[RMDB]
RNA sequence: GGGAACGACUCGAGUAGAGUCGAAAAGGACUUUCCGUGAUUUUCUGAACGACCGCAAUGGCUGGCGCAAUGCCACAUUAAUUGCCGUAACCAGUAAACAAUACUGAUCACGUCCAGAUGCCAGUACCUGGUCAAUGAAAUUCGUUUCAUUGACCAGAAAAGAAACAACAACAACAAC
Reactivity to 2A3 in 0.01 (KOAc 150mM, MgCl2 10mM, bicine 150mM(pH8.5), 24C), signal-to-noise 5, nucleotides 027 to 126: g020g010a040c010u030u070u000c030c040g030u010g120a210u020u090u030u030c030u030g040a080a030c060g040a040c080c030g000c050a010a010u040g070g030c080u000g010g000c050g010c160a150a110u300g040c030c000a020c010a010u210u280a180a030u040u040g020c010c010g010u020a020a050c030c000a020g010u070a030a120a040c060a100a100u080a140c020u030g010a030u070c060a030c110g020u020c010c010a040g040a180u080g060c010c000a020g040u080a120c060
Reactivity to DMS in 0.01 (KOAc 150mM, MgCl2 10mM, bicine 150mM(pH8.5), 24C), signal-to-noise 5, nucleotides 027 to 126: g000g030a090c120u000u000u000c030c020g020u000g010a110u020u010u000u000c010u000g020a060a040c090g000a180c080c210g000c040a030a030u000g000g000c100u000g020g010c000g000c190a110a070u010g000c010c010a030c020a060u000u010a110a040u010u000g010c060c070g010u000a110a090c080c010a020g000u000a030a080a100c260a090a110u010a040c040u010g000a030u000c110a080c060g000u000c020c030a040g010a090u000g000c050c040a080g010u010a100c200

Annotation: The data come from the RNA Mapping Database (RMDB), library OK2TRN. An RNA of 177 nucleotides, treated with 2A3 and DMS and read out base by base. DMS adducts were read by reverse transcription with MarathonRT. The reactions ran in a buffer of 150 mM KOAc, 10 mM MgCl2 and 150 mM bicine (pH 8.5), at 24 C.